An RNA of 177 nucleotides, treated with DMS and 2A3 and read out base by base.

[RMDB]
RNA sequence: GGGAACGACUCGAGUAGAGUCGAAAAGAUAUGGACGAUCCACAGGCGUUGAAAUACUGGGUCGGAAACGACCUGUAUGGAGCCUGGGAUCGUCCUAAGUCAAAACCUAGCUCUUCGGAGCUAGGAACCCUUGUAUAACCUUCGGGUUAUACAAGGGAAAAGAAACAACAACAACAAC
Reactivity to DMS in 0.01 (KOAc 150mM, MgCl2 10mM, bicine 150mM(pH8.5), 24C), signal-to-noise 2, nucleotides 027 to 126: g000a010u000a110u010g010g010a030c020g040a010u000c000c000a100c080a010g030g020c000g000u000u000g000a300a190a020u000a000c000u020g020g010g020u000c000g000g010a020a020a040c020g010a000c000c000u000g020u010a000u000g000g010a050g040c010c000u000g030g010g010a000u000c000g010u000c000c000u000a010a040g000u000c000a110a090a150a200c000c000u000a000g010c000u000c000u000u020c240g030g020a000g020c000u010a000g000g010a020a070
Reactivity to 2A3 in 0.01 (KOAc 150mM, MgCl2 10mM, bicine 150mM(pH8.5), 24C), signal-to-noise 2, nucleotides 027 to 126: g000a020u030a020u070g010g000a000c000g020a000u010c000c040a190c050a300g010g000c040g250u300u080g020a000a040a000u060a020c160u250g060g030g000u010c010g020g000a000a040a000c000g000a000c000c000u010g000u010a000u000g020g030a010g010c000c000u000g000g040g000a000u010c010g000u000c000c000u010a010a000g000u000c000a000a000a050a070c000c000u000a000g000c000u000c010u050u130c300g160g000a000g000c000u000a010g000g000a000a010

Conditions: 150 mM KOAc, 10 mM MgCl2 and 150 mM bicine (pH 8.5), 24 C. It was measured as part of the RMDB library TTRDES. 2A3 adducts were read by reverse transcription with SuperScript II with manganese.